[RMDB]
RNA sequence: GGGAACGACUCGAGUAGAGUCGAAAAGAAGACGUGACGAAAAGUCACGUCAAUACAGAGACUACGCAACUCUGAAAAAGACAACAAAAGUUUAAAAGCGUAGCAGGAUCGAGAGAUCCUGAAAAGAGGGAGCAUUUAAUUUCGAUUAAAUGCUCCCAAAAGAAACAACAACAACAAC
Reactivity to DMS in 0.01 (KOAc 150mM, MgCl2 10mM, bicine 150mM(pH8.5), 24C), signal-to-noise 2, nucleotides 027 to 126: g000a300a150g010a030c000g050u010g000a000c000g020a220a100a090a140g010u000c000a000c030g000u010c000a040a020u000a280c020a010g000a000g030a160c010u000a000c000g010c010a100a050c000u010c000u000g000a060a080a060a140a050g000a200c120a080a110c210a050a060a070a070g010u000u050u010a040a010a040a200g000c000g010u000a010g000c000a030g000g000a000u000c000g000a160g010a180g000a050u000c000c010u000g000a030a050a040a080g000a210
Reactivity to 2A3 in 0.01 (KOAc 150mM, MgCl2 10mM, bicine 150mM(pH8.5), 24C), signal-to-noise 2, nucleotides 027 to 126: g160a100a030g010a000c000g020u000g010a000c010g080a150a280a030a070g000u000c000a000c000g000u000c000a000a000u000a000c000a000g000a000g010a060c000u000a000c000g000c000a100a060c000u030c000u000g020a070a020a010a000a000g140a180c110a130a020c090a010a190a110a030g050u130u130u160a020a090a070a000g010c000g010u010a000g000c000a000g000g000a000u000c000g030a010g000a000g000a170u000c000c000u010g000a010a010a000a000g200a070
An RNA of 177 nucleotides, treated with DMS and 2A3 and read out base by base. For 2A3 the reverse transcriptase was SuperScript II with manganese.